[RMDB]
RNA sequence: GGGAACGACUCGAGUAGAGUCGAAAAGCCUCUAAUAUCUUUGUUAUUAACAAGGACACUUAUGCAGCUCUUAGAAACUCUUUAACUAAUGAUGCCUAUUCACGAUUUUUGGGGUUGUUUAACAAGUAUGGGACUUACUUCGGUAAGUCCAAAAGAAACAACAACAACAAC
Reactivity to DMS in 0.01 (KOAc 150mM, MgCl2 10mM, bicine 150mM(pH8.5), 24C), signal-to-noise 3, nucleotides 027 to 129: g000c040c000u030c150u000a080a060u090a260u080c010u010u040u030g040u000u020a170u040u030a070a110c040a100a020g010g020a000c230a070c180u000u080a060u010g000c040a080g010c020u020c110u080u060a060g050a140a110a090c080u040c090u000u000u000a100a120c080u020a060a090u050g020a020u040g070c090c020u090a110u030u040c030a060c290g030a100u000u090u020u020u000g150g000g000g000u240u000g050u000u000u000a050a110c170a060a020g020u060a060u070g000
Reactivity to 2A3 in 0.01 (KOAc 150mM, MgCl2 10mM, bicine 150mM(pH8.5), 24C), signal-to-noise 2, nucleotides 027 to 129: g020c000c000u000c110u140a060a090u070a060u210c040u000u000u000g030u070u120a240u080u100a110a000c090a000a000g000g000a030c040a050c130u070u010a000u180g000c020a030g020c020u020c030u020u040a050g140a300a050a010c020u080c000u170u100u120a040a010c100u180a020a110u130g060a030u140g010c000c000u030a070u110u110c100a070c190g170a180u170u020u000u100u190g000g000g000g050u060u000g000u000u090u010a050a040c010a030a030g110u060a120u120g080

An RNA of 170 nucleotides, treated with DMS and 2A3 and read out base by base. For DMS the reverse transcriptase was MarathonRT.